[RMDB]
Chemical mapping of a 207-nucleotide RNA with DMS and 2A3. 2A3 adducts were read by reverse transcription with SuperScript II with manganese. DMS adducts were read by reverse transcription with MarathonRT.
RNA sequence: GGGAACGACUCGAGUAGAGUCGAAAACUCGCGAAUAACGCAGGCAUCGACUGCGAAGGCUAAACACAACCUGAGACCGAUAGUGAACAAGUAGUGUGAACGAACGCUGCAAAGUACCCUCAGAAGGGAGGCGAAAUAGAGCAUGAAAUCAGUUGGCCUACAAAUAGGUCUUCGGACCUAUUUGUAGAAAAGAAACAACAACAACAAC
Reactivity to DMS in 0.01 (KOAc 150mM, MgCl2 10mM, bicine 150mM(pH8.5), 24C), signal-to-noise 2, nucleotides 027 to 156: c030u020c030g000c050g000a140a150u000a130a160c040g040c000a010g000g000c100a180u000c000g010a100c010u000g000c000g020a060a060g040g040c000u000a080a100a130c160a100c030a070a040c010c000u000g000a100g000a060c040c020g080a170u000a050g020u000g010a060a110c060a080a100g030u000a020g010u000g030u000g000a090a080c110g000a080a120c050g040c030u000g000c010a040a030a090g000u000a060c090c030c010u010c040a110g000a110a110g010g030g000a110g000g020c050g010a060a020a100u000a150g000a010g010c030a080u010g000a060a060a060u010c070a050g000u010u000g000g000c100
Reactivity to 2A3 in 0.01 (KOAc 150mM, MgCl2 10mM, bicine 150mM(pH8.5), 24C), signal-to-noise 4, nucleotides 027 to 156: c010u020c010g030c040g100a150a140u170a150a040c040g010c010a010g040g000c030a210u100c090g120a100c020u010g000c020g020a030a010g060g000c050u070a060a170a000c030a010c040a100a080c010c040u120g030a040g030a090c000c060g100a080u090a080g110u120g040a080a020c020a120a000g030u070a020g010u060g020u020g070a060a040c070g010a040a010c040g010c020u050g020c020a000a070a030g010u050a040c010c020c010u040c050a100g040a190a040g110g010g000a010g010g000c010g040a030a010a000u110a050g040a000g010c010a020u100g060a120a030a050u100c040a010g000u010u020g040g010c000